RNA sequence: GGGAACGACUCGAGUAGAGUCGAAAAUAUAGCUCAUGGUUAAGGUUAGGAAUUAUACUUAGGGUUUUCAUCACGAACUGACAUCAGCUAUAGUGCCAAAACUCUAUUUAUACAAAUGGAUAAUUGAGGAUAGCAGUGGAUUCGUCCACUGCUAUCCAAAAGAAACAACAACAACAAC
Reactivity to 2A3 in 0.01 (KOAc 150mM, MgCl2 10mM, bicine 150mM(pH8.5), 24C), signal-to-noise 2, nucleotides 027 to 126: u060a000u030a010g000c000u000c000a040u090g010g010u190u130a120a070g020g020u000u000a000g120g040a080a170u300u120a080u000a100c080u060u090a010g090g150g020u050u040u080u050c050a050u030c000a000c060g120a190a100c020u060g020a040c000a050u080c000a000g000c000u060a000u000a070g100u100g060c040c000a120a160a190a130c040u020c000u000a070u070u120u080a300u010a110c160a100a030a020u010g010g000a070u010a140a150u230u110g030a050
Reactivity to DMS in 0.01 (KOAc 150mM, MgCl2 10mM, bicine 150mM(pH8.5), 24C), signal-to-noise 1, nucleotides 027 to 126: u000a050u020a020g000c030u030c130a010u000g000g010u000u050a180a130g020g020u000u000a140g000g000a090a030u020u000a080u030a000c130u000u000a140g000g060g000u000u000u000u010c080a090u100c050a040c030g040a120a070c030u070g000a070c060a030u000c120a000g000c000u000a150u000a080g000u000g100c060c060a020a130a090a020c020u000c000u000a000u000u000u000a170u000a060c140a000a200a120u000g000g000a000u000a020a050u000u000g000a300